[RMDB]
RNA sequence: GGGAACGACUCGAGUAGAGUCGAAAAGGGGUCACGGGAGCGUCCCAACAGCCUUGGAUUUAUACUGAAGCCUCCACGGUAUUGUCAGGCUGUGGGACGCAUCGAUCGUGACGGAGGCACCCAAAGUAAAUGGAUGUGUUCGCACAUCCAUUUACAAGCGUUCUUUUAGGUUCGCCUAAAAGAACGCAAAAGAAACAACAACAACAAC
Reactivity to 2A3 in 0.01 (KOAc 150mM, MgCl2 10mM, bicine 150mM(pH8.5), 24C), signal-to-noise 2, nucleotides 027 to 156: g000g090g050g010u000c010a000c010g000g000g000a010g000c010g000u010c030c020c030a130a120c010a020g020c020c000u190u270g080g000a040u030u300u090a010u090a000c020u030g060a110a030g020c000c000u000c000c000a010c000g010g000u000a000u000u040g110u070c300a230g020g000c010u000g000u020g000g000g000a020c000g040c020a030u020c000g010a000u000c000g000u000g000a010c000g000g000a010g000g000c010a030c000c000c000a050a030a020g000u000a000a010a000u000g010g020a000u000g070u000g020u010u120c190g030c100a000c010a010u000c000c000a000u000u000u000a000c000a000a020
An RNA of 207 nucleotides, treated with 2A3 and read out base by base. The 2A3 profile rests on 1,500 reads. Reactivities are given for positions 27 through 156.